[RMDB]
RNA sequence: GGGAACGACUCGAGUAGAGUCGAAAAGUGGAUCGGGUCCAGUGUUAGCUGCUUACUGGUCUGCCCAUUCCAAGCCGGGAGUUGGGCUGAGUGACCUGGGCGAAGGCUGGGUUGCGCAGCUCCUAGAGUGGAGGGCAAUGCGUGAGGCUGGCUUCACCUUACGGCAUCAGUUCGCUGAUGCCGUAAGAAAAGAAACAACAACAACAAC
Reactivity to 2A3 in 0.01 (KOAc 150mM, MgCl2 10mM, bicine 150mM(pH8.5), 24C), signal-to-noise 1, nucleotides 027 to 156: g050u040g000g060a070u010c060g030g000g050u000c060c030a010g050u020g020u080u100a100g010c070u130g080c000u070u110a030c000u030g000g100u040c200u080g000c050c040c010a050u070u080c000c000a040a040g090c030c000g000g010g000a070g030u090u040g110g000g040c100u070g040a020g020u100g010a010c020c020u040g110g000g000c140g040a100a040g090g000c030u000g050g040g000u000u050g000c040g000c000a020g020c010u050c000c000u050a060g020a020g070u140g020g040a050g000g010g010c050a030a070u170g020c050g000u100g080a040g040g070c000u030g020g050c000u120u000c030a050c010